An RNA of 177 nucleotides, treated with 2A3 and DMS and read out base by base.
Conditions: 150 mM KOAc, 10 mM MgCl2 and 150 mM bicine (pH 8.5), 24 C.
For DMS the reverse transcriptase was MarathonRT.
2A3 adducts were read by reverse transcription with SuperScript II with manganese.
Values cover nucleotides 27 to 126.

[RMDB]
RNA sequence: GGGAACGACUCGAGUAGAGUCGAAAAAUAUUUAAAACACAUGUGAAGCAAAGUAUGUGCGACAGAAAACACGGGAAGGGGUGGAUCAAUGUGUAAUGUGAGUCCCCGCAACUUCAGAAGCGUGGACAAAUAGGCCUCUGUUCGCAGAGGCCUAUUUAAAAGAAACAACAACAACAAC
Reactivity to 2A3 in 0.01 (KOAc 150mM, MgCl2 10mM, bicine 150mM(pH8.5), 24C), signal-to-noise 1, nucleotides 027 to 126: a000u070a080u000u040u130a110a050a030a000c020a000c010a020u140g020u000g050a010a010g230c010a100a220a000g020u130a000u170g020u000g060c000g010a000c000a110g160a060a000a000a000c020a040c030g000g000g120a000a090g000g000g010g000u170g000g110a020u000c010a110a070u000g010u000g040u190a300a000u040g150u000g070a040g040u000c000c000c020c020g000c020a060a050c080u270u300c070a100g060a090a000g050c010g000u000g000g000a000c000
Reactivity to DMS in 0.01 (KOAc 150mM, MgCl2 10mM, bicine 150mM(pH8.5), 24C), signal-to-noise 2, nucleotides 027 to 126: a030u050a050u000u000u020a040a030a190a140c030a050c050a020u030g010u020g010a190a170g020c030a070a030a100g000u020a070u000g030u000g000c000g000a090c100a070g020a100a050a120a080c090a010c000g030g000g000a120a050g030g000g000g010u030g000g000a040u020c120a040a060u000g000u010g000u050a030a090u060g000u030g020a170g010u000c000c000c030c060g000c010a040a080c100u040u090c290a200g010a060a250g000c030g000u000g010g000a050c000